Chemical mapping of a 177-nucleotide RNA with 2A3 and DMS.

RNA sequence: GGGAACGACUCGAGUAGAGUCGAAAAUCAGAUGAGACUAGACAUCAGACUAGAUAGUAUCACACUACAGGUACAUAGUAGAGACAUACAUAGAUGAGUAUGACACAUCAGAGGCGCGGGCCACCGAAAUGACUAGUCGAUUCGUCGACUAGUCAUUAAAAGAAACAACAACAACAAC
Reactivity to 2A3 in 0.01 (KOAc 150mM, MgCl2 10mM, bicine 150mM(pH8.5), 24C), signal-to-noise 2, nucleotides 027 to 126: u060c020a010g030a110u040g030a010g050a060c080u050a060g010a070c010a080u050c020a010g140a090c040u060a000g050a120u070a060g020u010a020u040c010a010c010a020c100u120a040c070a030g050g070u040a030c030a070u070a050g060u010a000g020a000g050a040c000a040u060a020c020a040u090a020g120a100u060g020a020g060u030a060u090g030a000c010a000c000a050u100c020a000g050a030g080g000c060g000c030g090g060g000c010c030a020c040c000g030a030
Reactivity to DMS in 0.01 (KOAc 150mM, MgCl2 10mM, bicine 150mM(pH8.5), 24C), signal-to-noise 3, nucleotides 027 to 126: u000c060a110g000a070u000g010a120g010a060c090u010a060g000a090c070a050u000c050a100g010a120c070u000a060g010a130u000a100g010u000a050u000c040a090c110a080c100u000a050c080a050g020g010u010a040c130a090u010a060g010u000a040g010a100g030a100c070a060u010a020c040a090u010a080g010a060u000g010a080g020u000a020u000g010a090c080a080c040a050u010c040a060g010a080g010g000c040g020c050g000g000g010c020c030a030c060c050g000a040